[RMDB]
RNA sequence: GGGAACGACUCGAGUAGAGUCGAAAAGACACGACGGAGACGUCGUGUCAAGUCCAGUGCGAAAGCACUGGACAAAUAAGGGGUGUUUUUCUCGCUGACUUUCAACCCCAAGAAAAAAAUGUCAGCAGACCAUUAAUAUGUUCGCAUAUUAAUGGUCAAAAGAAACAACAACAACAAC
Reactivity to 2A3 in 0.01 (KOAc 150mM, MgCl2 10mM, bicine 150mM(pH8.5), 24C), signal-to-noise 4, nucleotides 027 to 126: g000a000c000a000c000g010a000c010g020g010a050g020a050c000g000u000c000g000u000g000u000c000a000a000g010u000c000c000a010g010u010g000c010g100a130a030a050g000c000a010c000u010g010g010a000c000a000a060a000u120a070a040g030g000g000g000u010g030u060u060u020u050u020c050u010c060g000c000u000g000a000c010u060u080u070c050a080a090c000c000c020c070a030a070g080a020a020a010a000a000a000a020u090g000u010c010a000g000c010a000
Reactivity to DMS in 0.01 (KOAc 150mM, MgCl2 10mM, bicine 150mM(pH8.5), 24C), signal-to-noise 5, nucleotides 027 to 126: g000a010c000a000c010g000a000c000g000g000a250g010a190c000g020u000c000g020u000g000u000c010a020a080g000u010c010c010a010g030u000g010c000g010a130a110a150g020c000a000c000u000g010g000a000c000a010a050a070u010a080a150g010g010g010g020u000g010u000u000u000u000u000c030u010c150g010c010u000g010a020c010u000u000u000c050a040a050c010c000c000c090a050a110g000a010a000a000a050a020a030a040u010g010u000c000a020g020c010a150
The record gives the reactivity of an RNA of 177 nucleotides to 2A3 and DMS. For DMS, 7,362 sequencing reads were counted. The reactions ran in a buffer of 150 mM KOAc, 10 mM MgCl2 and 150 mM bicine (pH 8.5), at 24 C. The data come from the RNA Mapping Database (RMDB), library OK2TRN.